[RMDB]
RNA sequence: GGGAACGACUCGAGUAGAGUCGAAAAAGGAAAGUCCGGGCUCCACGGAAAUACGGUGCCGGAUAACGUCCGGCGGGGGCGACCCCAGGGAAAGUGCCACAGAGAGCAAACCGCCAUGCCUUGCAUGAACCCACUCUCAGUUCGCUGAGAGUGGGUUAAAAGAAACAACAACAACAAC
Reactivity to 2A3 in 0.01 (KOAc 150mM, MgCl2 10mM, bicine 150mM(pH8.5), 24C), signal-to-noise 2, nucleotides 027 to 126: a020g190g000a150a030a000g010u010c010c030g010g020g060c010u070c050c040a050c010g140g060a030a080a040u200a020c070g130g000u050g020c020c000g000g020a040u020a090a050c060g120u020c000c020g000g000c000g010g000g000g000g000c030g010a080c020c000c030c020a010g020g000g010a070a120a040g040u040g070c040c000a020c020a020g120a040g010a020g030c020a080a030a020c000c030g000c010c000a000u050g030c020c030u090u130g020c000a010u100g080
Reactivity to DMS in 0.01 (KOAc 150mM, MgCl2 10mM, bicine 150mM(pH8.5), 24C), signal-to-noise 1, nucleotides 027 to 126: a010g010g000a040a030a160g000u020c000c010g000g000g000c040u000c070c020a060c080g010g000a130a100a070u000a120c130g000g000u050g000c000c000g040g000a000u010a120a060c200g010u010c000c000g020g020c040g000g020g000g010g000c190g040a070c050c030c000c060a140g000g020g000a030a030a030g020u010g000c000c100a060c120a020g030a170g010a120g000c060a040a100a040c030c050g040c080c020a110u030g020c030c020u000u000g020c060a040u010g000

An RNA of 177 nucleotides, treated with 2A3 and DMS and read out base by base. Source: RMDB library RFM100, as collected in RNAgym. Values cover nucleotides 27 to 126. 2A3 adducts were read by reverse transcription with SuperScript II with manganese. The reactions ran in a buffer of 150 mM KOAc, 10 mM MgCl2 and 150 mM bicine (pH 8.5), at 24 C. For DMS, 1,523 sequencing reads were counted. The 2A3 profile rests on 1,024 reads.